[RMDB]
Background:
This 177-nucleotide RNA was probed chemically with DMS and 2A3. Source: RMDB library VIROID, as collected in RNAgym. The RNA was probed in 150 mM KOAc, 10 mM MgCl2 and 150 mM bicine (pH 8.5) at 24 C.
RNA sequence: GGGAACGACUCGAGUAGAGUCGAAAAGGGAAACCUACUCGCGCGAGGCGGAGAUCGAGCGCCAGUUCGUGCGCGGCGACCUGAAGUCGCUUCGGCUUCUUCUUGUUCGCGUCCUGCGUGGAACGGCGAAUAGUCUUUACUUCGGUAAAGACUAUUCAAAAGAAACAACAACAACAAC
Reactivity to DMS in 0.01 (KOAc 150mM, MgCl2 10mM, bicine 150mM(pH8.5), 24C), signal-to-noise 7, nucleotides 027 to 126: g020g010g000a120a090a140c020c010u000a100c030u000c030g010c060g010c040g000a060g000g010c050g000g000a080g000a100u000c060g000a120g010c050g010c010c010a090g010u000u000c030g040u000g020c010g010c020g000g000c010g000a020c000c010u010g000a020a030g010u000c110g010c010u000u010c140g030g010c000u000u000c000u000u000c000u000u000g000u010u000c010g000c020g010u020c020c130u010g000c030g040u000g010g000a030a040c030g010g000c060
Reactivity to 2A3 in 0.01 (KOAc 150mM, MgCl2 10mM, bicine 150mM(pH8.5), 24C), signal-to-noise 4, nucleotides 027 to 126: g010g000g000a080a040a030c010c010u010a040c020u020c010g030c000g000c020g050a050g060g040c060g050g060a070g020a130u100c080g050a030g080c040g010c030c010a040g010u040u050c040g060u060g020c000g000c000g010g000c000g000a000c000c010u020g010a010a010g020u010c010g000c000u020u050c120g130g000c000u020u000c000u020u000c000u010u070g110u160u030c010g010c010g040u070c010c040u070g020c020g000u050g030g000a030a020c020g020g000c020
The DMS profile rests on 17,266 reads.
Values cover nucleotides 27 to 126.